[RMDB]
RNA sequence: GGGAACGACUCGAGUAGAGUCGAAAACGCGGUAGCCGCCAGCAGGGCCGCCAUACCCCGUGCAAUGAGCGAUAGCCGCACGCGCUACUCCCCGGAAAUCUGAGAUAUCGGGAGUAGGUUACGCGCGAGGACAUAGCACUUUCGAGUGCUAUGUCCUAAAAGAAACAACAACAACAAC
Reactivity to 2A3 in 0.01 (KOAc 150mM, MgCl2 10mM, bicine 150mM(pH8.5), 24C), signal-to-noise 3, nucleotides 027 to 126: c030g030c010g000g020u090a070g050c040c010g000c000c000a020g020c000a020g040g010g020c000c060g090c010c000a130u300a120c020c000c030c060g010u010g020c040a160a300u150g050a050g090c010g020a070u110a100g000c000c010g010c020a020c040g010c010g040c000u000a010c000u060c000c000c000c040g110g070a130a230a070u020c050u230g080a060g000a140u160a070u250c020g000g000g000a000g010u000a010g000g010u130u090a080c080g000c010g000c000g050
Reactivity to DMS in 0.01 (KOAc 150mM, MgCl2 10mM, bicine 150mM(pH8.5), 24C), signal-to-noise 1, nucleotides 027 to 126: c130g040c010g000g000u000a100g020c060c060g000c040c030a060g020c000a080g000g070g040c000c200g020c060c200a020u010a220c150c070c010c030g000u000g010c040a010a090u000g000a160g010c000g000a140u060a160g020c000c020g010c070a090c000g000c010g000c000u000a010c010u010c060c000c000c190g000g000a090a110a020u010c060u040g000a120g000a170u040a010u030c110g000g000g000a090g000u000a010g000g060u010u010a120c040g000c050g000c100g030